Chemical mapping of a 177-nucleotide RNA with 2A3. 2A3 adducts were read by reverse transcription with SuperScript II with manganese. The 2A3 profile rests on 407 reads. The RNA was probed in 150 mM KOAc, 10 mM MgCl2 and 150 mM bicine (pH 8.5) at 24 C. Source: RMDB library OK1LIB, as collected in RNAgym.
RNA sequence: GGGAACGACUCGAGUAGAGUCGAAAAAUAGAUACUAUGUUUACAUAUGGAUCCCUACAUCGUUACAUUCCAUUUAGGAUUAGGAAUACGCGUAAUCGGACCUGCUUUUUACAUAUCUCUAUUGGGAGCUGAUGUCGGCAUUCGUGCCGACAUCAGCAAAAGAAACAACAACAACAAC
Reactivity to 2A3 in 0.01 (KOAc 150mM, MgCl2 10mM, bicine 150mM(pH8.5), 24C), signal-to-noise 2, nucleotides 027 to 126: a000u130a060g080a000u130a010c110u050a140u150g090u000u000u000a080c170a040u030a150u240g030g050a050u000c000c000c000u040a050c140a010u230c020g000u000u000a030c030a000u000u020c000c000a070u000u180u300a170g000g030a190u300u040a170g050g060a050a050u090a160c090g050c000g000u130a080a140u240c040g000g010a070c000c000u000g160c080u190u000u000u000u000a000c020a000u010a000u010c020u020c000u060a060u000u010g070g000g050a000